Source: RMDB library OK3TST, as collected in RNAgym. This 207-nucleotide RNA was probed chemically with 2A3 and DMS. Values cover nucleotides 27 to 156.

RNA sequence: GGGAACGACUCGAGUAGAGUCGAAAAUGGGGCUAGAGUAAAUCUUACCCCACAACUCACCUGGAGAAAGGAGAUCGAAGGGAUGGUGUAACUUGAGCAUCAUCAAGGCCACUGGGGUGUGGAGAGGCAACGUGAGGGAAAAGCCCACAGGAUUUGGUCUAAAUAUUUCAUUCGUGAAAUAUUUAGAAAAAGAAACAACAACAACAAC
Reactivity to 2A3 in 0.01 (KOAc 150mM, MgCl2 10mM, bicine 150mM(pH8.5), 24C), signal-to-noise 6, nucleotides 027 to 156: u050g000g010g030g000c040u080a010g010a010g050u190a110a280a130u030c000u010u030a020c000c000c020c000a010c020a010a020c010u060c020a090c010c030u040g020g010a030g020a060a060a020g040g010a020g010a040u070c060g040a040a020g050g000g000a020u020g010g040u010g010u050a100a120c060u050u110g060a020g020c020a060u070c000a010u020c030a090a040g040g010c030c010a040c060u050g000g000g030g000u060g030u040g010g010a060g000a020g030g000c010a020a040c050g020u040g030a070g000g010g000a010a100a030a040g020c020c030c010a050c040a030g080g010a070u090u150u190g030g010
Reactivity to DMS in 0.01 (KOAc 150mM, MgCl2 10mM, bicine 150mM(pH8.5), 24C), signal-to-noise 3, nucleotides 027 to 156: u000g020g010g000g040c000u000a040g020a070g010u000a100a090a190u010c020u000u000a040c010c000c010c010a020c040a040a080c060u010c050a090c060c020u000g000g010a110g010a080a090a080g010g000a070g010a070u010c050g020a120a100g000g010g020a040u000g030g020u000g000u000a070a140c120u000u000g000a130g020c080a100u000c040a070u000c020a070a080g010g030c050c010a090c050u010g010g020g020g020u000g020u000g010g010a100g000a090g010g020c050a060a060c040g020u000g010a120g020g020g000a070a060a080a160g020c010c000c040a070c050a090g010g010a210u000u000u000g020g010